[RMDB]
RNA sequence: GGGAACGACUCGAGUAGAGUCGAAAAAAAUUGGUAAUUCCUUCUUCUUCAACGGUUUGGACGAGCCGACUCGCUUCGCCUGCUACCCCGUGUCGCACCCUCACGGUGCGUGGCGUUUCCUCUCGCCACUGGAUGCUGAAUUCGUUCAGCAUCCAGUAAAAGAAACAACAACAACAAC
Reactivity to 2A3 in 0.01 (KOAc 150mM, MgCl2 10mM, bicine 150mM(pH8.5), 24C), signal-to-noise 3, nucleotides 027 to 126: a000a000a020u150u080g040g000u080a060a070u080u060c020c000u030u050c020u060u000c000u110u050c030a140a080c050g050g060u030u070u080g090g010a040c020g010a000g030c020c000g050a080c020u000c010g030c070u060u070c030g020c020c020u040g050c000u040a060c000c010c000c020g010u030g030u040c000g020c020a030c020c000c000u130c030a060c040g010g000u020g000c010g000u010g000g010c010g020u020u030u030c000c000u000c010u040c000g030c010c010
Reactivity to DMS in 0.01 (KOAc 150mM, MgCl2 10mM, bicine 150mM(pH8.5), 24C), signal-to-noise 2, nucleotides 027 to 126: a050a030a070u030u020g020g000u000a130a100u010u000c010c010u000u000c060u010u000c030u010u000c090a040a130c070g000g020u000u000u000g010g000a070c090g010a110g000c010c020g010a090c070u000c040g010c040u020u010c060g000c020c000u000g000c020u010a040c040c030c020c020g010u020g000u000c070g010c070a030c000c000c050u030c130a120c110g010g010u000g000c040g010u020g000g010c030g010u000u020u000c000c010u000c090u000c050g000c010c010